[RMDB]
RNA sequence: GGGAACGACUCGAGUAGAGUCGAAAAUAAUCUAUCAUACGGGCCAGAUGCUGACAUCGAGCUGGUCCUGUCAUCCGUUCGACGGCUAUCACGUUCGCUAUAGCGACGGUGGUUGCGUACUGCGUGUGGAUGGCCUGGAUGGCGGCCCCUCGCCCGAAGUACAUGAACGGUUCGCCGUUCAUGUACUAAAAGAAACAACAACAACAAC
Reactivity to 2A3 in 0.01 (KOAc 150mM, MgCl2 10mM, bicine 150mM(pH8.5), 24C), signal-to-noise 2, nucleotides 027 to 156: u160a010a110u100c070u130a140u130c070a090u070a190c000g000g010g000c010c040a040g050a050u100g030c110u090g080a100c050a150u150c110g040a020g070c050u050g010g030u030c000c010u000g010u000c000a010u000c020c030g040u060u140c050g140a110c060g030g000c020u010a010u010c000a010c150g070u170u000c040g010c030u120a080u120a300g010c010g040a020c040g050g170u130g160g000u050u070g000c020g000u070a080c100u120g010c010g010u050g030u020g060g080a010u020g000g000c030c000u040g030g000a010u010g010g000c000g010g030c030c010c000c000u000c000g000c000c000c020g030a050